The data come from the RNA Mapping Database (RMDB), library OK3TST. Structure probing data (2A3 and DMS) for a 207-nucleotide construct.

[RMDB]
RNA sequence: GGGAACGACUCGAGUAGAGUCGAAAAAUGUGAAGAAAAGGGAAUCCUCAUAUACUGUUGGUGGGAAUGUAAAUUAGUACAGCCUUUAUGGAACACUGUAUGGUGGUUUCUCAGAAUACUAAAAAUAGAGCUGCUGUAUGAUCCAGCAAUUCCACUACCAUCCCCUAUGAUUCGUCAUAGGGGAUGGAAAAGAAACAACAACAACAAC
Reactivity to 2A3 in 0.01 (KOAc 150mM, MgCl2 10mM, bicine 150mM(pH8.5), 24C), signal-to-noise 3, nucleotides 027 to 156: a000u100g010u040g040a040a080g050a020a110a030a020g060g020g010a060a060u080c020c000u020c010a050u100a020u040a160c100u070g060u130u050g040g010u020g010g000g030a020a050u020g000u060a040a050a090u050u080a040g080u020a000c030a000g010c000c010u110u120u040a080u130g040g020a010a010c020a020c040u050g070u260a100u240g030g050u020g020g050u010u100u000c050u040c020a040g120a070a080u170a140c060u160a070a050a030a170a030u050a030g010a010g020c080u080g000c000u000g070u020a090u050g030a020u020c050c020a000g000c000a000a060u030u020c010c010a010c040u030a020
Reactivity to DMS in 0.01 (KOAc 150mM, MgCl2 10mM, bicine 150mM(pH8.5), 24C), signal-to-noise 1, nucleotides 027 to 156: a120u000g030u020g010a100a060g020a040a040a050a120g010g020g030a230a230u010c020c010u020c030a060u020a080u010a150c120u010g000u000u010g000g000u000g010g100g000a090a190u000g000u000a060a100a090u010u020a180g010u010a000c000a030g000c020c020u000u000u000a050u000g000g020a040a080c030a050c050u010g020u000a060u000g010g000u000g020g030u010u000u000c040u000c040a130g000a100a060u010a130c110u000a010a040a070a100a130u000a090g010a080g010c080u000g030c010u020g010u000a110u000g000a110u010c050c000a140g020c010a060a150u000u010c000c030a000c090u000a300
Notes: 2A3 adducts were read by reverse transcription with SuperScript II with manganese. For DMS, 1,687 sequencing reads were counted. Reactivities are rounded to 0.1 and cut off at 0 and 3. The reactions ran in a buffer of 150 mM KOAc, 10 mM MgCl2 and 150 mM bicine (pH 8.5), at 24 C.